An RNA of 177 nucleotides, treated with 2A3 and DMS and read out base by base. The RNA was probed in 150 mM KOAc, 10 mM MgCl2 and 150 mM bicine (pH 8.5) at 24 C. For DMS the reverse transcriptase was MarathonRT. It was measured as part of the RMDB library M2PK90. Values cover nucleotides 27 to 126. For DMS, 4,303 sequencing reads were counted.

[RMDB]
RNA sequence: GGGAACGACUCGAGUAGAGUCGAAAACAGAACGGGUGGUAUAGGAGCCGGCCGGACCCGGGCUCCCUCGCUGGCUUCAUGGUCGGGCUCCGACAAGGAAGACAAUGGAAAGCCCACAUCCUGAGAAGUGUUAUACUGUAUUCGUACAGUAUAACACAAAAGAAACAACAACAACAAC
Reactivity to 2A3 in 0.01 (KOAc 150mM, MgCl2 10mM, bicine 150mM(pH8.5), 24C), signal-to-noise 3, nucleotides 027 to 126: c030a020g070a100a020c060g000g020g030u040g020g040u090a070u100a270g020g000a010g030c010c010g040g000c050c030g040g000a050c020c020c020g090g100g000c040u040c020c030c000u020c020g090c060u010g020g000c000u060u050c010a040u070g040g000u060c050g060g060g070c030u020c010c010g000a010c010a020a060g080g030a030a050g030a040c040a050a050u100g090g030a240a030a020g010c010c020c000a020c000a030u020c010c030u070g050a090g030a300a030
Reactivity to DMS in 0.01 (KOAc 150mM, MgCl2 10mM, bicine 150mM(pH8.5), 24C), signal-to-noise 5, nucleotides 027 to 126: c100a100g020a120a110c110g010g010g020u010g010g010u010a090u010a180g010g000a050g020c000c020g030g020c050c030g020g010a080c300c050c060g000g020g000c060u010c120c080c010u000c060g000c030u010g010g000c060u000u010c030a060u000g020g010u010c010g020g010g020c050u010c000c000g010a040c100a050a070g000g000a070a070g010a070c090a060a070u010g000g010a060a080a160g000c030c000c020a100c110a050u000c010c000u010g010a160g000a090a120